[RMDB]
RNA sequence: GGGAACGACUCGAGUAGAGUCGAAAAAGGGAACACUGGGAUUUUAAUAACCUUGGAGAACAUUGGAACCCAAAAUGUUCAAUAAGGCCUUCCAUCCUCUCCUUUUAUUAGAUGGUGGUCAUUUUCAAACACUAACUCGAUUCGUCGAGUUAGUGUUAAAAGAAACAACAACAACAAC
Reactivity to DMS in 0.01 (KOAc 150mM, MgCl2 10mM, bicine 150mM(pH8.5), 24C), signal-to-noise 4, nucleotides 027 to 126: a040g010g000g010a050a070c100a060c240u010g010g000g010a080u000u010u000u010a050a120u000a120a200c020c000u000u000g000g010a300g010a030a020c010a000u000u000g010g000a100a130c100c080c070a100a060a040a010u000g000u010u000c020a020a300u020a030a020g000g000c090c080u000u010c050c100a060u000c070c060u000c080u010c020c030u010u000u000u000a040u010u000a090g000a060u000g000g040u000g000g000u020c050a100u020u000u000u000c100a070
Reactivity to 2A3 in 0.01 (KOAc 150mM, MgCl2 10mM, bicine 150mM(pH8.5), 24C), signal-to-noise 2, nucleotides 027 to 126: a000g060g010g000a100a030c030a000c140u070g150g000g000a090u110u070u060u110a090a120u220a090a060c010c010u020u050g080g000a120g000a010a000c010a010u010u060g080g040a050a080c040c020c000a030a010a000a100u000g000u050u040c000a000a010u100a030a010g010g000c010c010u100u090c000c000a030u040c030c030u050c020u040c020c000u020u110u060u000a080u090u050a040g080a120u050g030g090u030g040g050u010c080a140u080u080u060u010c050a070